[RMDB]
RNA sequence: GGGAACGACUCGAGUAGAGUCGAAAACGACGUAUAGUGCAAAUGUUGUCAGACACUUUAGACAAAUUGUCUGAUUACUGUACGUUUGUUUGUUGGGCUCAUGGCUUUGAAUUAACGUCUGCAUCAUAUAGGGUACACUUCGGUGUACCCAAAAGAAACAACAACAACAAC
Reactivity to DMS in 0.01 (KOAc 150mM, MgCl2 10mM, bicine 150mM(pH8.5), 24C), signal-to-noise 3, nucleotides 027 to 129: c020g020a030c000g020u030a050u000a070g030u070g020c200a020a030a030u050g010u010u060g020u000c000a060g030a030c030a040c110u000u030u000a180g010a160c240a070a040a030u000u000g000u020c020u050g020a000u000u000a020c000u040g060u040a000c000g030u000u000u130g030u010u000u080g030u000u030g050g010g000c040u020c020a050u050g020g020c020u020u040u030g020a090a060u040u030a060a040c080g000u010c030u010g000c110a070u040c060a050u070a090u050a120
Reactivity to 2A3 in 0.01 (KOAc 150mM, MgCl2 10mM, bicine 150mM(pH8.5), 24C), signal-to-noise 2, nucleotides 027 to 129: c000g020a000c000g000u010a000u000a030g030u010g080c100a010a130a100u250g040u170u070g010u000c000a000g000a010c010a000c000u080u010u040a100g000a140c120a090a030a020u020u000g000u000c000u000g020a040u000u080a020c000u000g000u030a000c000g000u000u000u000g070u000u060u020g160u040u070g010g040g020c000u020c060a040u080g000g000c030u070u000u080g030a050a040u000u110a120a030c060g040u040c060u050g060c000a040u020c010a000u100a050u120a110
Structure probing data (DMS and 2A3) for a 170-nucleotide construct.
It was measured as part of the RMDB library 15KLIB.
The DMS profile rests on 9,532 reads.